[RMDB]
RNA sequence: GGGAACGACUCGAGUAGAGUCGAAAAACCUUUGUGAUGCUUUUGACGCGAUGGGCAGGUGAGGACGAUCCCAUUGGGAUCGUCUACCCACCACCGAUGCAUCGCGAUAAGCAUCACUCUGGUAAAACUCGAGGGAUUGUUCGCAAUCCCUCGAGAACACGAUAAUACACUUCGGUGUAUUAUCGUGAAAAGAAACAACAACAACAAC
Reactivity to DMS in 0.01 (KOAc 150mM, MgCl2 10mM, bicine 150mM(pH8.5), 24C), signal-to-noise 1, nucleotides 027 to 156: a110c030c030u000u020u000g020u010g000a040u000g000c000u000u000u000u000g040a270c080g000c010g010a010u010g020g000g030c060a220g040g010u000g030a300g030g010a020c010g000a000u010c000c000c020a300u000u000g050g010g020a030u000c010g010u020c010u000a000c010c010c030a300c040c020a050c020c010g010a230u000g040c000a040u000c030g000c020g010a090u000a030a030g010c000a000u000c010a040c010u010c000u010g000g000u010a080a130a090a080c010u000c010g000a030g010g000g000a020u000u000g010u000u000c300g020c030a040a020u000c000c010c010u000c000g010a000g010a020a180
Reactivity to 2A3 in 0.01 (KOAc 150mM, MgCl2 10mM, bicine 150mM(pH8.5), 24C), signal-to-noise 4, nucleotides 027 to 156: a000c000c000u010u010u010g000u000g000a010u000g000c010u050u060u100u210g170a110c020g000c020g000a010u030g040g170g070c180a140g020g010u010g000a030g010g000a000c000g000a000u010c030c000c120a200u180u300g010g000g000a000u010c000g000u000c000u000a000c020c020c010a040c010c010a010c010c010g080a100u170g100c010a000u000c000g000c000g010a010u000a010a000g000c000a000u000c000a000c000u000c000u000g010g000u060a050a050a070a110c000u000c000g000a000g000g000g000a010u000u030g020u110u090c190g000c070a000a000u000c010c010c000u000c000g000a000g000a000a000